The record gives the reactivity of an RNA of 207 nucleotides to DMS and 2A3.
[RMDB]
RNA sequence: GGGAACGACUCGAGUAGAGUCGAAAACCGUAGGGACGAUAAGUAUGAAACAGCAACAGCGUUCCUUCGAAAGAGGGAACGACAUGCUGGAGUAUGUACUUUUGACGUCCCUAAACGGAAACAAGUUCGCAAUUUCUUCGGAAAUUGCGAACUUGAAGAAUGUUCAAAGGUUCGCCUUUGAACAUUCAAAAGAAACAACAACAACAAC
Reactivity to DMS in 0.01 (KOAc 150mM, MgCl2 10mM, bicine 150mM(pH8.5), 24C), signal-to-noise 1, nucleotides 027 to 156: c000c000g000u000a010g020g030g000a130c020g010a120u000a050a020g000u000a010u030g000a300a270a180c030a000g020c000a100a020c060a160g000c000g000u000u000c000c020u010u000c000g020a280a160a270g020a020g040g030g000a000a030c040g020a030c040a230u000g050c000u010g040g020a130g050u000a060u000g010u000a040c000u000u010u000u000g010a300c130g000u010c000c070c000u000a000a030a080c010g020g000a130a090a220c020a020a000g050u000u000c000g010c000a000a000u010u000u000c000u000u000c300g010g000a020a000a000u000u000g000c010g020a000a000c000u000u000g010a080a160
Reactivity to 2A3 in 0.01 (KOAc 150mM, MgCl2 10mM, bicine 150mM(pH8.5), 24C), signal-to-noise 2, nucleotides 027 to 156: c000c000g000u010a030g010g000g000a030c010g000a060u000a110a000g000u000a030u040g010a020a010a000c010a000g030c000a000a080c040a170g040c000g000u010u000c010c020u000u000c000g020a060a020a010g000a000g000g000g000a000a000c000g050a040c000a010u030g000c000u000g000g010a010g010u000a020u300g000u010a010c000u040u020u040u080g090a040c000g020u000c000c000c000u000a000a010a000c010g030g070a010a150a030c000a000a000g000u010u000c000g010c010a000a000u010u000u000c020u050u150c260g050g000a000a000a000u000u000g000c000g000a000a000c010u000u000g000a000a000
It was measured as part of the RMDB library RNAMAK. The RNA was probed in 150 mM KOAc, 10 mM MgCl2 and 150 mM bicine (pH 8.5) at 24 C. 2A3 adducts were read by reverse transcription with SuperScript II with manganese.